[RMDB]
RNA sequence: GGGAACGACUCGAGUAGAGUCGAAAAUUGGCGAAUGCCUGUGGGUCUACAUUUGUUGCGGGUUCGAGACCCGUCAGAGCCCGGCUCUGUAGCUCAAUGGUAGAGCGGUGUAUUCACAUAAACUUGUAAAAGACACGUGCCUUCGGGCACGUGUCAACGUAGUUAAAUAGUUCGCUAUUUAACUACGAAAAGAAACAACAACAACAAC
Reactivity to DMS in 0.01 (KOAc 150mM, MgCl2 10mM, bicine 150mM(pH8.5), 24C), signal-to-noise 2, nucleotides 027 to 156: u010u000g020g000c020g010a120a070u000g010c020c010u000g080u000g020g000g020u000c020u010a090c010a060u000u010u000g040u000u000g010c000g000g000g000u000u000c040g010a300g020a090c030c020c020g070u010c080a100g010a090g000c020c140c100g060g030c000u000c020u000g000u020a040g010c000u000c040a080a060u010g000g010u000a080g010a070g090c000g000g010u000g000u000a030u010u000c010a010c020a080u000a060a060a110c040u010u000g010u010a070a060a080a240g010a060c000a000c000g000u000g000c030c010u000u000c300g000g030g020c000a000c000g000u000g000u000c000a010a020
Reactivity to 2A3 in 0.01 (KOAc 150mM, MgCl2 10mM, bicine 150mM(pH8.5), 24C), signal-to-noise 4, nucleotides 027 to 156: u080u040g050g030c040g090a280a070u260g010c000c000u020g010u010g010g030g000u000c040u020a010c020a050u060u060u170g070u040u020g010c000g010g010g000u000u010c010g010a040g030a090c010c010c000g000u000c010a020g000a010g000c100c270c120g110g000c010u010c000u010g030u020a000g010c010u010c020a010a030u170g230g050u140a020g010a010g000c020g010g000u010g000u020a060u020u050c020a010c000a040u150a090a140a080c100u090u110g080u140a040a110a040a030g010a000c000a010c020g000u000g000c000c010u040u080c170g020g000g000c010a000c000g000u000g000u000c000a000a000
An RNA of 207 nucleotides, treated with DMS and 2A3 and read out base by base.
For 2A3 the reverse transcriptase was SuperScript II with manganese.
Conditions: 150 mM KOAc, 10 mM MgCl2 and 150 mM bicine (pH 8.5), 24 C.
Source: RMDB library M2RFPK, as collected in RNAgym.